Source: RMDB library OK1LIB, as collected in RNAgym. Structure probing data (2A3 and DMS) for a 177-nucleotide construct. For DMS, 9,565 sequencing reads were counted. DMS adducts were read by reverse transcription with MarathonRT.

[RMDB]
RNA sequence: GGGAACGACUCGAGUAGAGUCGAAAAAUUUUCCUUGGAUGCAAUACACAGGACCUAAACCAUUUAGACACCCUUACUUACAUAUUGGACAACACACCCAGUACAGAUUAUGGAUGGCAAAAGGUGAACUGUGUUGAAGAUUCGUCUUCAACACAGUAAAAGAAACAACAACAACAAC
Reactivity to 2A3 in 0.01 (KOAc 150mM, MgCl2 10mM, bicine 150mM(pH8.5), 24C), signal-to-noise 7, nucleotides 027 to 126: a000u060u030u010u040c010c000u030u040g090g010a050u100g060c050a070a040u060a150c060a010c020a060g030g040a030c010c000u060a070a060a060c020c020a050u060u100u110a040g030a030c020a050c020c040c000u040u080a060c020u070u050a030c070a050u130a090u080u140g040g030a020c000a130a010c040a040c000a020c040c010c000a010g020u060a050c030a050g060a040u050u090a050u210g100g000a010u010g030g020c030a060a020a060a060g060g010u060g020a010
Reactivity to DMS in 0.01 (KOAc 150mM, MgCl2 10mM, bicine 150mM(pH8.5), 24C), signal-to-noise 5, nucleotides 027 to 126: a090u030u030u000u000c000c010u000u020g020g020a090u010g010c090a060a050u030a040c150a070c080a040g010g020a040c040c010u010a060a120a110c090c040a090u010u000u020a100g000a100c070a070c030c000c010u000u010a070c040u000u020a040c090a060u000a070u000u000g000g010a060c120a030a070c110a070c080a070c100c020c020a040g000u030a050c110a080g010a070u020u000a050u010g010g000a060u010g000g020c050a010a030a090a080g000g020u010g000a100